Chemical mapping of a 177-nucleotide RNA with 2A3 and DMS. For DMS, 1,512 sequencing reads were counted.

RNA sequence: GGGAACGACUCGAGUAGAGUCGAAAACGAGUCGGUCGACUUGAUCAAGUCGGGUGGAUACCGGGUCGGCGCCGGUGAAAUUGAAACGGUGCUGCUCGGGCAUCCGGACGUGGCGGAGGCGGCAGUCGGUCCUAUCGUAUUUCGAUACGAUAGGACCAAAAGAAACAACAACAACAAC
Reactivity to 2A3 in 0.01 (KOAc 150mM, MgCl2 10mM, bicine 150mM(pH8.5), 24C), signal-to-noise 2, nucleotides 027 to 126: c040g010a000g100u030c000g000g030u010c020g010a050c020u070u140g030a110u170c090a070a000g030u010c000g010g000g060u070g000g050a080u080a110c010c020g010g040g060u290c110g040g000c020g000c000c000g070g000u060g080a050a110a080u220u270g020a270a260a040c000g020g010u000g000c010u000g000c010u000c000g000g000g040c000a020u020c000c000g000g020a020c020g030u030g010g050c030g000g000a000g020g000c000g070g000c000a030g090u160c120
Reactivity to DMS in 0.01 (KOAc 150mM, MgCl2 10mM, bicine 150mM(pH8.5), 24C), signal-to-noise 1, nucleotides 027 to 126: c080g010a080g010u000c020g040g000u000c010g030a010c020u000u000g000a140u000c080a040a060g010u010c010g000g010g040u000g020g000a110u000a100c020c000g010g000g020u000c030g030g000c020g030c000c020g000g000u010g000a030a160a120u000u010g020a100a150a050c040g010g010u010g000c000u000g010c000u000c010g000g010g010c080a000u000c000c020g000g020a050c090g010u000g030g000c090g020g010a090g010g010c080g010g030c090a090g010u030c150

The data come from the RNA Mapping Database (RMDB), library OK2TRN.